This 170-nucleotide RNA was probed chemically with DMS and 2A3.
RNA sequence: GGGAACGACUCGAGUAGAGUCGAAAAAGGCCAGUGCUUUAAAAUACUCUAUAAGGGCAAUGUGACGCAUGAUGCUAGCUCUGCCAUUAAUAGACCACAACUCACAUUUGUGAAGAAUUUUAUUACUCCAACACACUGUUCGCAGUGUGUAAAAGAAACAACAACAACAAC
Reactivity to DMS in 0.01 (KOAc 150mM, MgCl2 10mM, bicine 150mM(pH8.5), 24C), signal-to-noise 9, nucleotides 027 to 129: a040g030g000c040c030a030g010u040g020c070u010u020u030a050a060a060a080u010a060c110u000c020u000a060u020a050a050g020g000g060c000a060a100u050g000u000g000a150c200g000c100a140u080g000a140u040g070c020u000a200g020c010u020c050u000g030c000c000a070u020u010a080a050u040a060g030a000c030c030a060c100a060a090c090u030c090a040c100a160u060u010u020g000u050g030a040a060g040a060a030u040u040u020u050a040u010u010a100c070u040c010c020a080
Reactivity to 2A3 in 0.01 (KOAc 150mM, MgCl2 10mM, bicine 150mM(pH8.5), 24C), signal-to-noise 9, nucleotides 027 to 129: a000g060g010c030c010a030g020u050g060c020u060u070u110a050a080a020a010u150a060c030u010c030u050a050u030a110a080g040g000g000c010a020a060u080g020u030g040a030c060g010c050a050u200g040a080u270g180c010u020a010g000c000u010c070u020g000c000c000a000u030u030a040a070u020a030g030a020c010c000a020c020a060a070c020u070c030a050c020a150u070u110u130g020u020g020a040a080g050a060a050u050u100u060u030a120u090u080a090c040u030c030c020a060

Values cover nucleotides 27 to 129. The data come from the RNA Mapping Database (RMDB), library 15KLIB.